About this RNA: An RNA of 207 nucleotides, treated with 2A3 and read out base by base. 2A3 is a SHAPE reagent: it acylates the 2'-hydroxyl of flexible nucleotides of all four kinds. 2A3 adducts were read by reverse transcription with SuperScript II with manganese.
RNA sequence: GGGAACGACUCGAGUAGAGUCGAAAAACGAGGUACGCCUCGAAAAUAUGACCGGUGUCAUAGCCUCUAGCACACAGAGGUCGCGUGGGUUCAACUCCCCCCCUUUUCCGAGGGUAUCGGAAACUAAAAAACACAAUUUGGUUCGCCAAAUUGUGAACGGAGAUAAAUGGUUCGCCAUUUAUCUCCGAAAAGAAACAACAACAACAAC
Reactivity to 2A3 in 0.01 (KOAc 150mM, MgCl2 10mM, bicine 150mM(pH8.5), 24C), signal-to-noise 2, nucleotides 027 to 156: a000c010g000a000g000g000u030a020c110g090c020c000u000c000g030a080a020a000a040u130a060u070g010a010c030c050g150g030u170g080u150c030a070u010a040g010c010c000u020c010u050a070g080c080a070c020a020c030a160g010a020g050g010u000c060g010c010g040u110g020g010g030u070u140c060a080a130c060u060c000c010c000c000c000c000c010u010u040u000u030c010c000g000a010g000g000g030u060a050u000c000g020g000a000a010a010c000u120a040a010a060a010a010a000c010a000c000a000a010u000u000u000g030g010u030u030c090g040c110c010a000a000a000u000u000g000u000g010a060a010
For 2A3, 1,386 sequencing reads were counted. Values cover nucleotides 27 to 156. It was measured as part of the RMDB library M2RFPK.